This 177-nucleotide RNA was probed chemically with DMS and 2A3. For DMS, 5,798 sequencing reads were counted. The RNA was probed in 150 mM KOAc, 10 mM MgCl2 and 150 mM bicine (pH 8.5) at 24 C. The 2A3 profile rests on 3,921 reads. 2A3 adducts were read by reverse transcription with SuperScript II with manganese. It was measured as part of the RMDB library OK2TRN.

RNA sequence: GGGAACGACUCGAGUAGAGUCGAAAACUACUGCGCUUAUCGUCGCGCUGAGUGCGAUGUUAAUGGGGCUUUCUGACUACUAUUUCGAGCAUUUUAGUAAGCUGAUGCUAAUCCCCGCAGAGCAGAGUGUAACUGAAUGGUUCGCCAUUCAGUUACAAAAAGAAACAACAACAACAAC
Reactivity to DMS in 0.01 (KOAc 150mM, MgCl2 10mM, bicine 150mM(pH8.5), 24C), signal-to-noise 4, nucleotides 027 to 126: c020u000a120c050u000g010c070g010c150u000u010a050u000c010g010u010c020g000c000g020c120u000g010a110g030u000g000c010g020a010u000g000u000u000a030a070u020g030g010g010g010c150u000u010u010c030u010g000a030c020u000a090c000u000a010u000u010u010c050g010a070g020c100a090u000u000u000u000a030g010u000a060a090g010c040u000g000a070u000g000c070u000a050a110u000c020c020c010c070g010c160a050g000a070g010c020a050g000a080g000
Reactivity to 2A3 in 0.01 (KOAc 150mM, MgCl2 10mM, bicine 150mM(pH8.5), 24C), signal-to-noise 4, nucleotides 027 to 126: c030u260a120c020u040g020c110g040c070u070u040a030u110c030g030u000c000g010c000g080c200u140g220a120g130u160g000c000g010a020u020g000u060u080a060a090u180g000g030g030g000c010u070u050u050c060u110g080a090c000u160a050c000u010a110u100u260u110c050g040a050g020c080a070u050u110u000u040a030g010u010a080a050g050c030u040g060a050u080g040c010u010a050a110u140c000c000c000c010g000c040a050g010a030g020c030a000g010a040g100